Chemical mapping of a 177-nucleotide RNA with 2A3 and DMS. Conditions: 150 mM KOAc, 10 mM MgCl2 and 150 mM bicine (pH 8.5), 24 C. It was measured as part of the RMDB library M2PK50. For 2A3, 1,246 sequencing reads were counted.

RNA sequence: GGGAACGACUCGAGUAGAGUCGAAAACGGUCGAAAUUCGUUUCGACCGAAUAUGCUAGGUGAGCACAGCUGCAAUGCUAAGCUGAAAGCCAGCUGCAAGCGCGAGUUCGGCGUUCGCGCCGAACAAGUAAGUAGGCGUGUUCGCACGCCUACUUACAAAAGAAACAACAACAACAAC
Reactivity to 2A3 in 0.01 (KOAc 150mM, MgCl2 10mM, bicine 150mM(pH8.5), 24C), signal-to-noise 1, nucleotides 027 to 126: c020g010g000u070c020g030a020a020a040u100u100c220g050u000u000u010c010g010a020c010c000g020a000a020u170a050u040g000c040u030a040g000g140u040g050a010g020c010a010c000a070g000c000u070g000c090a180a120u180g020c030u070a130a040g000c000u050g000a130a030a000g000c030c000a030g000c000u030g020c080a110a040g090c060g000c020g100a070g040u000u010c010g000g000c010g030u030u080c260g000c000g000c030c000g000a000a000c000a010a020
Reactivity to DMS in 0.01 (KOAc 150mM, MgCl2 10mM, bicine 150mM(pH8.5), 24C), signal-to-noise 1, nucleotides 027 to 126: c060g000g040u000c000g010a010a000a020u010u050c220g030u000u000u000c000g030a010c020c000g010a010a030u000a060u010g000c030u010a070g050g010u000g000a080g000c060a140c100a020g000c020u000g010c160a110a090u000g040c110u000a070a070g000c000u020g000a130a130a210g050c090c020a060g060c040u000g000c080a110a100g010c110g050c150g000a200g000u000u000c010g030g020c000g000u000u010c120g000c010g030c000c000g000a000a000c020a050a120